RNA sequence: GGGAACGACUCGAGUAGAGUCGAAAAGCCUUACGAUUCGUCGUAAGGCAUACAAAGUUUUGGCACAAUGAGCCCGCAGCGUUGGUGCUCCCACGCGGUGCAAUACGACGGAUUUCGAUCCGUCGAAACAUAUUUGUGGUUUCGACCACAAAUAUGUAAAAGAAACAACAACAACAAC
Reactivity to DMS in 0.01 (KOAc 150mM, MgCl2 10mM, bicine 150mM(pH8.5), 24C), signal-to-noise 8, nucleotides 027 to 126: g010c000c000u000u000a000c000g010a030u000u000c200g020u000c000g020u000a000a010g010g020c010a010u000a020c130a090a090a140g010u000u000u000u000g010g010c040a040c090a120a100u010g010a120g010c020c000c040g020c090a110g000c030g010u010u000g020g010u010g000c170u010c070c010c020a050c070g000c030g000g020u000g010c050a090a090u010a130c010g010a010c000g010g010a030u000u000u010c150g010a020u000c010c000g010u000c000g000a030a090
Reactivity to 2A3 in 0.01 (KOAc 150mM, MgCl2 10mM, bicine 150mM(pH8.5), 24C), signal-to-noise 7, nucleotides 027 to 126: g000c000c000u000u000a000c000g010a010u020u070c200g030u000c000g000u140a010a000g010g000c000a010u060a000c040a000a120a020g020u040u060u140u150g070g000c030a020c040a140a140u160g030a060g020c000c030c020g000c030a070g000c020g040u110u150g030g030u150g060c060u110c010c000c010a010c000g010c020g030g010u020g000c000a010a050u150a100c010g000a000c010g010g000a010u050u060u100c170g070a020u020c000c000g000u000c000g010a010a000